[RMDB]
RNA sequence: GGGAACGACUCGAGUAGAGUCGAAAAAAAAAAGAUAUGGAUCCGACAUGCUCGACGGUUCGUUUGACGAUUCUCGGAAACGAGAAUCCGAGAACCCAAGAGCAACAGCGGAUCCUAAGUCAAAAAACAAAACGAAGUAGUUCGCUACUUCGUUUUGAAAAGAAACAACAACAACAAC
Reactivity to 2A3 in 0.01 (KOAc 150mM, MgCl2 10mM, bicine 150mM(pH8.5), 24C), signal-to-noise 1, nucleotides 027 to 126: a000a030a000a080a000a000g050a040u130a060u130g010g000a010u000c000c010g090a130c150a090u110g000c010u010c010g010a010c050g040g000u040u020c030g030u150u130u300g050a020c040g000a000u000u000c000u000c000g030g000a080a080a050c020g000a000g010a000a000u020c000c010g090a050g020a010a000c030c000c000a060a000g020a000g030c000a000a000c010a010g000c000g000g000a000u020c000c000u020a060a010g010u010c040a120a010a020a020a000a210
Reactivity to DMS in 0.01 (KOAc 150mM, MgCl2 10mM, bicine 150mM(pH8.5), 24C), signal-to-noise 3, nucleotides 027 to 126: a010a020a080a070a040a120g010a000u010a300u000g030g000a010u000c010c000g010a070c120a240u030g000c000u000c000g000a300c300g000g000u000u000c010g010u010u010u010g040a240c300g000a020u000u000c000u000c000g000g010a070a130a140c000g010a000g000a010a010u000c010c000g000a100g010a030a010c000c000c020a010a300g000a010g020c010a010a010c230a080g000c010g000g000a010u000c000c000u000a000a110g020u010c030a010a030a060a070a090a190